[RMDB]
RNA sequence: GGGAACGACUCGAGUAGAGUCGAAAAUGGUCCAGUGCAAGUUGCCGAAGGCUUAACAUUGCCACAGUUUAUUUUGAAAGAAGACAAGGAACUUGGUUAUUGCACAAAACACUACAAUACUGGAAAGGCCAACGAGGUGAUUCGUCACCUCGUUGGCAAAAGAAACAACAACAACAAC
Reactivity to 2A3 in 0.01 (KOAc 150mM, MgCl2 10mM, bicine 150mM(pH8.5), 24C), signal-to-noise 1, nucleotides 027 to 126: u060g000g000u000c010c020a000g000u000g060c020a000a090g050u150u300g100c000c020g000a230a220g000g000c000u200u210a110a000c070a210u130u000g000c000c000a000c000a000g000u040u000u000a070u050u200u000u000g210a290a300a150g260a090a070g050a050c000a000a000g020g000a160a050c000u000u000g000g090u000u230a050u000u200g000c070a000c000a000a050a120a000c090a000c000u180a090c000a000a200u170a050c040u070g030g000a000a080a080g000